[RMDB]
RNA sequence: GGGAACGACUCGAGUAGAGUCGAAAAAAGCAAGGGAAUAUCGAUUUGCACGACUUGCGCCAGAAGGCGGGUGAAGCAGGUGAUGAACUCUCUUGUAUUAUGGUGACUUACCCGUCGACUCACGGCGUCAGCGGGAAGCAUUCGUGCUUCCCGCUGAAAAAGAAACAACAACAACAAC
Reactivity to 2A3 in 0.01 (KOAc 150mM, MgCl2 10mM, bicine 150mM(pH8.5), 24C), signal-to-noise 2, nucleotides 027 to 126: a010a000g000c050a040a000g060g000g000a140a030u060a080u100c040g080a080u060u000u070g090c020a010c080g080a030c110u080u210g000c000g000c010c000a120g010a300a030g060g000c000g070g000g000u050g010a030a000g000c010a010g050g020u040g030a050u060g030a090a060c030u040c000u000c010u010u050g060u100a090u080u120a130u110g180g030u090g060a050c010u030u020a050c030c000c020g000u030c000g040a030c020u020c070a050c110g100g000c020g040
Reactivity to DMS in 0.01 (KOAc 150mM, MgCl2 10mM, bicine 150mM(pH8.5), 24C), signal-to-noise 2, nucleotides 027 to 126: a070a070g020c040a000a080g000g010g000a070a070u010a070u010c030g010a080u030u000u000g050c040a110c140g020a060c020u000u030g010c010g000c010c010a160g020a050a140g000g000c030g000g000g000u010g010a090a060g020c010a010g000g010u010g010a030u010g010a090a230c120u020c020u000c010u000u010g020u010a070u010u020a070u020g020g000u020g000a100c090u010u000a060c030c020c030g000u000c020g030a110c060u000c140a120c170g020g040c070g010